[RMDB]
RNA sequence: GGGAACGACUCGAGUAGAGUCGAAAAGACGCCUAAUGGCGAAAAUGUAAAAUCAACUACACAUUAGAUAAAUACAAGUGCUAAAUCUCGUAACUAGUUGAUCUAGUCCAGCGGUGAGAUCCGCAGACCCUACUAGCCGAUUCGUCGGCUAGUAGGGAAAAGAAACAACAACAACAAC
Reactivity to DMS in 0.01 (KOAc 150mM, MgCl2 10mM, bicine 150mM(pH8.5), 24C), signal-to-noise 2, nucleotides 027 to 126: g020a240c080g000c020c000u070a110a120u000g000g000c000g010a020a050a140a050u030g020u020a030a120a040a080u010c030a000a000c020u000a070c050a040c260a070u000u000a100g010a000u040a020a020a040u000a050c060a130a160g030u010g000c100u000a090a080a030u020c000u000c050g000u000a050a300c300u000a080g000u000u030g000a000u000c040u020a010g000u020c020c020a090g080c080g000g040u000g000a080g000a000u000c000c040g000c020a080g010a170
Reactivity to 2A3 in 0.01 (KOAc 150mM, MgCl2 10mM, bicine 150mM(pH8.5), 24C), signal-to-noise 3, nucleotides 027 to 126: g040a000c000g000c010c020u250a280a160u300g000g000c020g020a000a110a000a000u210g030u080a000a000a000a110u030c010a000a040c000u070a010c010a000c000a030u060u050a060g020a110u160a060a200a030u290a090c080a160a110g140u040g160c020u090a020a130a040u010c020u000c100g010u000a040a030c030u020a020g000u010u040g040a000u000c010u000a020g070u030c030c070a050g010c000g000g000u050g050a170g020a110u050c000c000g070c030a000g030a000

An RNA of 177 nucleotides, treated with DMS and 2A3 and read out base by base. The RNA was probed in 150 mM KOAc, 10 mM MgCl2 and 150 mM bicine (pH 8.5) at 24 C. For 2A3, 1,988 sequencing reads were counted. It was measured as part of the RMDB library OK1LIB. Values cover nucleotides 27 to 126. For 2A3 the reverse transcriptase was SuperScript II with manganese. 2A3 is a SHAPE reagent: it acylates the 2'-hydroxyl of flexible nucleotides of all four kinds.